Overview
An RNA of 207 nucleotides, treated with 2A3 and DMS and read out base by base. For 2A3, 7,351 sequencing reads were counted. Values cover nucleotides 27 to 156. It was measured as part of the RMDB library OK3TST. 2A3 adducts were read by reverse transcription with SuperScript II with manganese.
RNA sequence: GGGAACGACUCGAGUAGAGUCGAAAACUCGCGAGCCCAUUGAGGCGUGGGGAGCGACAUGAAUCAGCCUCGAUUAGAUGUGGUCGACCGUACCGCGGCGUACAGCGACCUAGUUAGAAGCCGCAAAACCGGAAGAGAUGACGCUCGACGGACGUCAGCUACUAUUACGAUUCGUCGUAAUAGUAGCAAAAGAAACAACAACAACAAC
Reactivity to 2A3 in 0.01 (KOAc 150mM, MgCl2 10mM, bicine 150mM(pH8.5), 24C), signal-to-noise 8, nucleotides 027 to 156: c020u030c000g010c010g020a300g180c000c000c010a000u040u110g010a010g000g000c010g010u010g000g000g010g010a050g010c010g060a070c060a130u300g110a100a110u140c050a060g000c000c010u020c030g030a100u120u190a080g130a170u160g090u070g060g010u010c020g020a260c060c030g000u010a020c020c060g020c020g030g000c020g010u010a010c010a010g010c000g010a030c000c020u010a010g010u020u020a070g020a160a030g020c000c000g010c000a020a040a050a090c080c030g060g020a140a010g030a030g010a060u120g010a010c030g040c070u020c040g070a050c030g050g010a020c030g010u030c040a020
Reactivity to DMS in 0.01 (KOAc 150mM, MgCl2 10mM, bicine 150mM(pH8.5), 24C), signal-to-noise 3, nucleotides 027 to 156: c030u000c020g000c010g010a140g000c000c000c040a240u010u010g010a070g020g050c000g040u000g010g010g010g000a140g030c030g010a140c080a160u010g010a110a100u010c040a100g010c030c000u010c020g010a100u000u010a110g010a090u010g010u000g020g030u000c010g010a110c060c010g000u000a030c020c020g020c110g020g020c090g040u000a070c050a190g020c020g010a020c030c030u000a060g010u010u000a110g020a110a090g000c010c010g000c040a090a040a100a090c020c040g000g000a090a100g010a200g000a130u000g000a040c010g000c020u010c030g010a150c010g000g000a080c010g010u000c030a150